[RMDB]
RNA sequence: GGGAACGACUCGAGUAGAGUCGAAAACAUGCGGGGGAACCUGGGCAAUCAGGCUUACGACGACACGCCGCUCCCCCUCCCAGUGUCCUUCGGGUCAUGGGAAAAGAGCGAGAUUGACACGUACCAGUCCAUGACAAUCGUUCGCGAUUGUCAUGGAAAAAGAAACAACAACAACAAC
Reactivity to DMS in 0.01 (KOAc 150mM, MgCl2 10mM, bicine 150mM(pH8.5), 24C), signal-to-noise 2, nucleotides 027 to 126: c110a100u020g000c090g010g000g000g000g030a100a090c080c070u010g020g000g070c250a090a050u010c030a050g000g010c040u010u020a070c030g030a150c040g000a100c180a110c090g000c140c000g000c030u000c040c000c000c040c060u010c000c000c020a010g020u000g010u000c010c000u010u000c140g010g030g010u000c000a040u010g020g000g000a030a020a040a010g020a030g000c000g020a040g010a080u010u000g030a140c120a010c070g010u020a080c160c040a130g020
Chemical mapping of a 177-nucleotide RNA with DMS.
Reactivities are given for positions 27 through 126.
The data come from the RNA Mapping Database (RMDB), library OK2TRN.
For DMS, 1,153 sequencing reads were counted.